[RMDB]
RNA sequence: GGGAACGACUCGAGUAGAGUCGAAAAAUCGACGAAGGCUUGCCACGUGGACAAUUUAUAGCUAAGCUGCAACCAGAGCUCGCCGGACUCACCUACAGCAUCGUGGAAGGAAACAUCGACUCGGCGACGCUACUGACUGAUUCGUCAGUCAGUAGCGAAAAGAAACAACAACAACAAC
Reactivity to 2A3 in 0.01 (KOAc 150mM, MgCl2 10mM, bicine 150mM(pH8.5), 24C), signal-to-noise 2, nucleotides 027 to 126: a020u060c030g020a000c050g030a130a010g090g020c030u020u040g040c040c010a060c050g040u110g070g010a020c070a060a080u060u200u040a230u200a090g010c010u040a070a000g000c030u020g000c030a030a010c020c000a030g020a010g020c010u000c000g000c020c010g000g010a030c000u020c030a070c000c020u070a020c020a030g070c010a050u100c050g020u040g020g010a070a020g020g030a120a060a000c020a080u010c000g030a020c040u000c030g050g000c060g010a020
Reactivity to DMS in 0.01 (KOAc 150mM, MgCl2 10mM, bicine 150mM(pH8.5), 24C), signal-to-noise 2, nucleotides 027 to 126: a060u010c080g040a180c050g000a140a090g010g030c060u000u010g000c020c030a120c160g000u000g020g030a060c120a090a090u000u010u010a050u000a060g020c070u010a040a050g020c020u000g030c050a060a100c080c110a120g010a130g000c020u000c030g050c030c050g000g000a090c060u010c110a090c070c020u000a070c100a100g020c050a040u010c100g010u010g000g000a080a060g010g020a080a110a100c130a110u020c020g000a090c090u000c000g020g010c030g000a080